[RMDB]
RNA sequence: GGGAACGACUCGAGUAGAGUCGAAAAAGGUUUCUAUCCAAACUUUGAAAUAUCUUUUGACUUUAUAUUUUACAUGCAUGCAUGUGUGUUCAUGAUGGGGAGAGAAAGGAAUGUUCGCAUUUGGGUUUGCGUUGUUAAUAUUCGUAUUAACAACGCAAAAAGAAACAACAACAACAAC
Reactivity to DMS in 0.01 (KOAc 150mM, MgCl2 10mM, bicine 150mM(pH8.5), 24C), signal-to-noise 2, nucleotides 027 to 126: a070g010g000u000u010u000c020u000a050u020c050c040a030a070a040c110u000u020u020g010a050a030a040u010a060u020c000u000u020u000u000g000a220c080u000u010u010a060u000a060u010u010u000u030a020c010a020u010g010c020a030u000g000c080a070u010g020u000g010u000g030u000u000c070a020u000g000a100u020g010g020g000g000a050g010a130g010a030a040a040g000g000a060a060u030g000u000u000c050g000c120a120u000u010u000g000g000g010u000u010
Reactivity to 2A3 in 0.01 (KOAc 150mM, MgCl2 10mM, bicine 150mM(pH8.5), 24C), signal-to-noise 4, nucleotides 027 to 126: a010g070g000u020u010u020c020u040a100u030c020c030a020a040a080c060u020u040u140g050a030a040a020u110a090u160c040u020u050u040u040g030a060c020u010u150u040a110u070a130u170u040u100u050a020c030a020u030g100c020a010u060g030c030a100u070g030u010g010u010g020u000u070c040a040u070g060a070u060g020g040g010g000a080g010a010g040a030a010a050g080g060a060a050u100g040u050u010c000g000c050a060u030u040u050g030g010g000u000u060

Background: An RNA of 177 nucleotides, treated with DMS and 2A3 and read out base by base. The reactions ran in a buffer of 150 mM KOAc, 10 mM MgCl2 and 150 mM bicine (pH 8.5), at 24 C. For DMS the reverse transcriptase was MarathonRT.